[RMDB]
Conditions: 150 mM KOAc, 10 mM MgCl2 and 150 mM bicine (pH 8.5), 24 C. Chemical mapping of a 177-nucleotide RNA with 2A3 and DMS. For DMS the reverse transcriptase was MarathonRT.
RNA sequence: GGGAACGACUCGAGUAGAGUCGAAAAGCGCUGCGCCGCCCAGCCCUGUCGCCCCCCCGGAGGUGAUCCCUCCCUCCUGCCUCCCCGCCAGCCUGACCUGUGCCUGGCUCGCGGGCCGCAGUCUCGGCGUGUGAGAAUUCUUCGGAAUUCUCACACGAAAAGAAACAACAACAACAAC
Reactivity to 2A3 in 0.01 (KOAc 150mM, MgCl2 10mM, bicine 150mM(pH8.5), 24C), signal-to-noise 2, nucleotides 027 to 126: g020c030g000c040u090g010c060g030c020c010g020c000c010c000a000g000c000c000c030u050g040u070c020g000c000c000c000c000c000c000c000g040g010a010g020g010u110g010a070u040c000c000c000u010c010c010c010u000c000c000u020g020c010c010u020c000c020c000c000g000c000c000a010g000c020c010u050g040a060c010c040u100g030u080g060c020c000u020g030g000c020u000c010g010c020g010g020g000c010c020g010c010a040g030u010c020u020c040g020g020
Reactivity to DMS in 0.01 (KOAc 150mM, MgCl2 10mM, bicine 150mM(pH8.5), 24C), signal-to-noise 2, nucleotides 027 to 126: g060c120g010c020u020g010c070g020c060c010g010c040c030c020a060g010c070c040c040u030g010u000c000g010c000c000c020c030c030c020c070g020g000a040g000g010u010g020a090u010c030c000c010u000c010c010c020u020c010c000u000g030c020c010u000c070c030c000c000g000c030c040a030g010c020c010u010g000a120c070c070u010g000u030g050c060c020u000g010g000c020u000c210g020c060g000g030g000c180c120g010c020a050g000u000c010u020c000g000g000